[RMDB]
RNA sequence: GGGAACGACUCGAGUAGAGUCGAAAAGACCGAGACGCGAGUCUCCAGUAAGACUCACGGGAAGCCGAUGUUCUGUCGUACGUUUUGAAAAACGAGCCAGGGAGUGUGUCUGUAUGGCAAGUCUAACCGGAGUAUCCGGGGAGGCACAGGGAAACCGGAUAUACUAGCACUUCGGUGCUAGUAUAUCAAAAGAAACAACAACAACAAC
Reactivity to DMS in 0.01 (KOAc 150mM, MgCl2 10mM, bicine 150mM(pH8.5), 24C), signal-to-noise 2, nucleotides 027 to 156: g000a060c020c040g000a240g020a140c010g020c030g000a100g020u000c000u000c060c030a300g020u000a040a010g010a050c020u000c010a080c050g000g020g030a140a080g030c000c030g020a110u020g010u000u000c040u000g010u000c010g030u010a060c030g020u000u010u000u010g020a050a050a110a080a060c050g000a160g000c000c010a090g010g020g010a060g030u010g010u000g040u000c000u020g020u000a030u010g040g020c030a040a090g000u000c030u000a100a130c010c030g010g010a270g010u000a130u000c010c010g000g000g030g030a090g010g030c040a120c070a120g010g000g020a060a070a040c030c040g000
Reactivity to 2A3 in 0.01 (KOAc 150mM, MgCl2 10mM, bicine 150mM(pH8.5), 24C), signal-to-noise 2, nucleotides 027 to 156: g030a020c020c020g010a030g020a010c020g030c040g020a020g000u000c000u000c010c000a000g030u080a080a040g010a050c020u020c050a010c050g030g000g040a050a010g030c080c010g030a050u090g060u120u090c110u070g050u050c020g040u070a110c030g010u000u010u050u170g100a080a090a010a000a000c020g020a030g000c060c010a000g060g050g000a060g020u060g010u020g000u010c020u040g070u070a070u070g030g010c070a060a000g020u000c000u030a030a040c000c030g010g000a100g140u070a150u100c010c000g000g010g000g000a030g000g000c020a010c040a040g030g000g000a030a080a000c020c020g030